[RMDB]
RNA sequence: GGGAACGACUCGAGUAGAGUCGAAAACAGGCAGGCCGGCUCGAAGAGCGAGAGCGGCUCUCUCGCGAGAUCCAUGACACAGUUGCUCAAGGAUUGAGUUCCAUCGUAAUCUUGGCACGCGCCGCACAUGACAGCCAGAAUUCGUUCUGGCUGUCAUAAAAGAAACAACAACAACAAC
Reactivity to 2A3 in 0.01 (KOAc 150mM, MgCl2 10mM, bicine 150mM(pH8.5), 24C), signal-to-noise 1, nucleotides 027 to 126: c010a000g090g040c010a000g010g010c040c020g000g050c010u030c040g100a100a060g020a020g000c000g010a040g010a000g080c030g000g000c000u020c000u000c000u000c040g050c000g010a020g020a010u000c000c030a030u110g030a040c020a010c010a090g170u150u080g010c020u040c060a000a060g120g030a100u010u070g010a040g060u070u070c010c010a040u040c050g080u070a100a080u020c030u080u060g040g020c030a010c090g050c030g000c010c000g000c000a040c010
Reactivity to DMS in 0.01 (KOAc 150mM, MgCl2 10mM, bicine 150mM(pH8.5), 24C), signal-to-noise 2, nucleotides 027 to 126: c120a080g010g010c040a040g020g000c040c060g000g040c050u000c070g010a060a050g000a270g010c020g000a020g010a070g010c210g020g030c040u000c040u010c010u000c020g000c070g010a130g010a060u000c030c030a100u030g000a050c080a070c210a070g020u010u000g010c060u000c030a040a110g010g010a050u000u000g010a100g020u000u010c030c030a050u020c110g010u000a070a110u000c050u000u000g000g010c060a070c060g000c140g020c000c000g010c070a070c190

Structure probing data (2A3 and DMS) for a 177-nucleotide construct. The DMS profile rests on 1,443 reads. Reactivities are given for positions 27 through 126. For 2A3 the reverse transcriptase was SuperScript II with manganese. The reactions ran in a buffer of 150 mM KOAc, 10 mM MgCl2 and 150 mM bicine (pH 8.5), at 24 C. For DMS the reverse transcriptase was MarathonRT.